[RMDB]
RNA sequence: GGGAACGACUCGAGUAGAGUCGAAAAGAUAUGGACGCUACGAGCAACAGCCACACCGGUCGGAAACGACCGUUGUGGACAUGCUUAUGCGUCCUAAGUCAAACUUACAUUGUUCGCAAUGUAAGAACGAGACACUUUAGUUCGCUAAAGUGUCUCGAAAAGAAACAACAACAACAAC
Reactivity to 2A3 in 0.01 (KOAc 150mM, MgCl2 10mM, bicine 150mM(pH8.5), 24C), signal-to-noise 2, nucleotides 027 to 126: g010a000u040a030u080g000g000a000c000g010c040u110a070c280g090a010g000c000a020a300c090a260g230c020c000a010c000a020c000c010g000g020u010c000g010g000a050a040a040c010g030a020c020c010g000u000u000g020u010g000g020a020c020a020u030g000c000u030u030a040u140g010c000g030u040c000c000u000a020a000g020u050c000a100a020a040c010u000u010a000c000a010u000u010g070u030u180c300g050c150a010a000u000g000u010a010a000g000a050a080
Reactivity to DMS in 0.01 (KOAc 150mM, MgCl2 10mM, bicine 150mM(pH8.5), 24C), signal-to-noise 1, nucleotides 027 to 126: g020a080u000a300u020g000g010a030c000g010c010u000a130c300g010a030g000c010a040a100c250a130g000c000c000a040c000a010c030c000g000g000u000c000g040g000a070a090a070c000g030a000c000c040g040u030u000g040u000g010g000a020c160a060u000g000c010u000u000a130u000g010c000g000u000c010c010u000a010a070g000u000c000a030a100a240c010u000u010a000c000a040u000u000g020u010u000c220g020c040a020a010u000g000u000a000a000g000a040a210
This 177-nucleotide RNA was probed chemically with 2A3 and DMS. Values cover nucleotides 27 to 126. 2A3 adducts were read by reverse transcription with SuperScript II with manganese.